[RMDB]
Description: The record gives the reactivity of an RNA of 177 nucleotides to DMS and 2A3. Source: RMDB library OK1LIB, as collected in RNAgym. The reactions ran in a buffer of 150 mM KOAc, 10 mM MgCl2 and 150 mM bicine (pH 8.5), at 24 C.

RNA sequence: GGGAACGACUCGAGUAGAGUCGAAAACACAUGGACGCGUUGCUGGCGUUUUUCCAUAGGCUCCGCCCCCCUGACGAGCAUCACAAACAAGUCAGAGGUGGCGAAACCCGACAGGACUAUAAAGAUAAUUCUUAUAAAGGUUCGCCUUUAUAAGAAUAAAAGAAACAACAACAACAAC
Reactivity to DMS in 0.01 (KOAc 150mM, MgCl2 10mM, bicine 150mM(pH8.5), 24C), signal-to-noise 8, nucleotides 027 to 126: c060a080c140a130u010g010g010a050c080g010c070g000u020u020g010c100u000g010g010c120g000u000u000u000u000u000c010c010a030u000a180g010g010c090u010c300c000g000c000c000c020c020c010c000u000g010a000c000g000a300g010c130a080u010c260a140c280a130a110a060c070a030a200g000u000c010a010g000a100g000g020u030g010g010c010g010a020a060a120c270c010c010g010a090c220a050g010g000a050c090u010a090u050a060a080a080g000a050u010a080
Reactivity to 2A3 in 0.01 (KOAc 150mM, MgCl2 10mM, bicine 150mM(pH8.5), 24C), signal-to-noise 6, nucleotides 027 to 126: c110a000c020a070u090g040g020a010c000g030c000g100u120u160g080c130u060g070g000c000g030u050u030u020u110u000c010c000a040u050a050g070g000c040u050c070c000g000c000c000c000c000c000c000u000g000a000c010g000a010g080c070a090u210c080a040c080a130a210a020c030a100a020g000u010c000a000g070a110g050g020u090g000g000c000g000a020a020a010c000c000c010g020a030c030a040g090g030a010c050u110a130u080a300a150a000g080a040u160a140